The record gives the reactivity of an RNA of 207 nucleotides to 2A3 and DMS. The reactions ran in a buffer of 150 mM KOAc, 10 mM MgCl2 and 150 mM bicine (pH 8.5), at 24 C. It was measured as part of the RMDB library M2RFPK. For 2A3 the reverse transcriptase was SuperScript II with manganese. The DMS profile rests on 15,851 reads. For 2A3, 18,197 sequencing reads were counted.
RNA sequence: GGGAACGACUCGAGUAGAGUCGAAAAAUGUGCGGCAAAGAAACAUUGUUUAUGCAAAGGCACUUCGCAAUGUGUGCUCAAACAUUGCCUAUUCAAACACGCUUCACAAUGUGCGACAAAGAAACAUAAAACGUUUAGUACUUCGGUACUAAACGAACAUAUGUUCAUUGUUCGCAAUGAACAUAUGAAAAGAAACAACAACAACAAC
Reactivity to 2A3 in 0.01 (KOAc 150mM, MgCl2 10mM, bicine 150mM(pH8.5), 24C), signal-to-noise 9, nucleotides 027 to 156: a000u100g020u060g060c050g030g000c050a070a070a080g120a060a140a020c030a040u040u040g050u070u120u110a100u100g020c050a110a100a100g160g000c010a000c000u090u070c080g000c030a020a030u020g010u010g020u030g020c030u050c160a040a050a010c010a010u010u020g010c000c010u110a140u070u120c060a020a070a030c060a020c090g010c010u090u090c040a020c030a090a110u100g030u050g050c020g040a020c060a020a120a030g120a060a090a010c050a040u180a090a090a010a020c010g000u000u000u010a000g000u000a000c000u010u040c250g070g000u000a000c000u000a000a000a000c000g000a000a000
Reactivity to DMS in 0.01 (KOAc 150mM, MgCl2 10mM, bicine 150mM(pH8.5), 24C), signal-to-noise 5, nucleotides 027 to 156: a080u000g020u000g010c040g030g050c060a060a060a120g020a170a100a070c040a050u000u010g010u000u000u000a060u010g040c060a060a110a110g000g010c020a060c060u000u000c080g030c030a060a050u000g000u000g000u000g020c100u010c090a090a140a050c020a050u000u000g010c010c040u000a120u010u000c060a080a090a070c030a060c060g010c070u000u010c100a090c070a060a090u000g030u000g020c000g000a150c060a040a070a130g020a140a060a070c040a070u010a060a040a070a150c010g010u000u000u000a000g010u010a000c000u000u000c290g030g000u000a000c000u000a000a000a010c000g000a020a050